[RMDB]
RNA sequence: GGGAACGACUCGAGUAGAGUCGAAAACGGAGCAAUAAAAUUUGAUAGGGUGCUCAGAACCCAGCUCCUUUCGAAUGUGAGCAACCCACUUGCAGUCGAGAUGUUUUUGGGUCCAAUUGAGGUAAUGGUAGCUAAAAAUGUUCGCAUUUUUAGCUACAAAAGAAACAACAACAACAAC
Reactivity to 2A3 in 0.01 (KOAc 150mM, MgCl2 10mM, bicine 150mM(pH8.5), 24C), signal-to-noise 2, nucleotides 027 to 126: c020g010g000a010g030c020a040a070u170a240a210a100a080u220u170u170g050a100u140a130g120g030g000u070g000c020u000c040a030g030a050a050c000c000c000a010g000c000u000c010c000u020u030u000c010g040a030a010u030g010u010g010a000g010c050a100a200c000c000c000a010c000u000u030g030c020a010g010u010c020g000a000g010a090u080g110u070u060u070u150u070g070g000g010u000c040c000a050a040u120u150g090a060g000g080u110a090a050u130g090
Reactivity to DMS in 0.01 (KOAc 150mM, MgCl2 10mM, bicine 150mM(pH8.5), 24C), signal-to-noise 3, nucleotides 027 to 126: c140g020g000a050g020c020a100a080u010a070a080a100a140u000u010u010g000a120u000a090g000g000g030u010g010c060u020c070a060g000a050a080c010c000c010a080g000c020u000c010c020u010u000u000c010g010a030a040u000g000u010g000a030g000c080a080a160c090c090c060a200c020u000u000g000c030a030g020u000c020g000a030g000a030u010g000u000u000u010u010u000g010g010g000u000c010c020a080a130u000u010g000a080g020g020u000a050a090u000g010